[RMDB]
This 177-nucleotide RNA was probed chemically with 2A3 and DMS. For DMS the reverse transcriptase was MarathonRT. 2A3 adducts were read by reverse transcription with SuperScript II with manganese.
RNA sequence: GGGAACGACUCGAGUAGAGUCGAAAAGAUAUGGAAGCGAUGAUGGACAUGCCUUGCAAUCGGAAACGAUUGCGGAGGCAACAGCCAUAUCGCUUCCUAAGUCAAAGAGGUCGGUUCGCCGACCUCAUCGGAAAGUAUGGUUCGCCAUACUUUCCGAAAAAGAAACAACAACAACAAC
Reactivity to 2A3 in 0.01 (KOAc 150mM, MgCl2 10mM, bicine 150mM(pH8.5), 24C), signal-to-noise 2, nucleotides 027 to 126: g020a000u030a010u060g000g000a020a000g010c030g010a010u280g140a010u000g050g000a060c190a300u300g020c000c020u000u000g030c010a000a000u000c010g010g050a010a010a000c000g020a000u000u020g020c020g000g020a000g010g030c020a020a040c050a020g050c000c000a000u010a000u010c000g000c000u010u030c000c000u000a000a020g000u010c000a050a040a170g010a020g000g010u020c030g050g030u010u220c300g010c100c000g000a010c010c010u000c000a000
Reactivity to DMS in 0.01 (KOAc 150mM, MgCl2 10mM, bicine 150mM(pH8.5), 24C), signal-to-noise 1, nucleotides 027 to 126: g000a040u010a140u010g010g000a040a020g000c010g040a020u000g000a030u000g010g000a040c150a190u010g000c000c020u000u000g000c010a010a000u000c000g020g000a060a010a100c010g000a010u000u000g000c010g010g020a020g000g020c010a040a020c240a140g000c000c000a010u000a050u000c010g020c010u000u010c000c000u000a000a040g000u000c020a160a110a110g000a000g000g030u000c000g010g010u000u030c180g010c000c000g000a000c000c000u000c000a010